[RMDB]
Source information:
Chemical mapping of a 177-nucleotide RNA with 2A3 and DMS. DMS adducts were read by reverse transcription with MarathonRT. It was measured as part of the RMDB library TTRDES.

RNA sequence: GGGAACGACUCGAGUAGAGUCGAAAAGAUAUGGAUCCCGGAGCAAGCGCAGUGGUCGGAAACGACCACGCGUGAUGACCUCCUGGGAUCCUAAGUCAAAACUUUGCAAUGUUCGCAUUGCAAAGAAGCUAUGAUUAGAGUUCGCUCUAAUCAUAGCAAAAGAAACAACAACAACAAC
Reactivity to 2A3 in 0.01 (KOAc 150mM, MgCl2 10mM, bicine 150mM(pH8.5), 24C), signal-to-noise 5, nucleotides 027 to 126: g010a010u050a020u090g000g000a000u010c010c010c000g000g000a040g010c200a300a060g020c020g020c180a130g010u000g000g010u000c000g000g000a020a020a050c000g000a000c010c000a000c010g000c000g000u020g010a040u170g040a060c020c010u040c050c120u220g010g000g000a000u000c000c000u000a000a000g000u000c020a020a020a140a220c000u000u010u000g010c010a000a010u020g010u060u090c230g030c150a000u010u000g000c000a000a010a000g010a020a010
Reactivity to DMS in 0.01 (KOAc 150mM, MgCl2 10mM, bicine 150mM(pH8.5), 24C), signal-to-noise 5, nucleotides 027 to 126: g010a040u000a280u010g000g000a010u000c000c000c010g000g000a030g000c160a110a120g010c000g010c000a140g070u000g010g000u000c000g020g000a040a050a130c010g030a000c000c000a000c000g000c000g040u000g000a050u010g010a140c300c010u000c000c010u020g030g000g010a000u000c000c000u000a000a080g010u000c020a110a090a140a220c010u000u000u000g010c000a010a000u000g010u010u010c280g010c000a010u000u010g010c000a000a010a010g010a100a130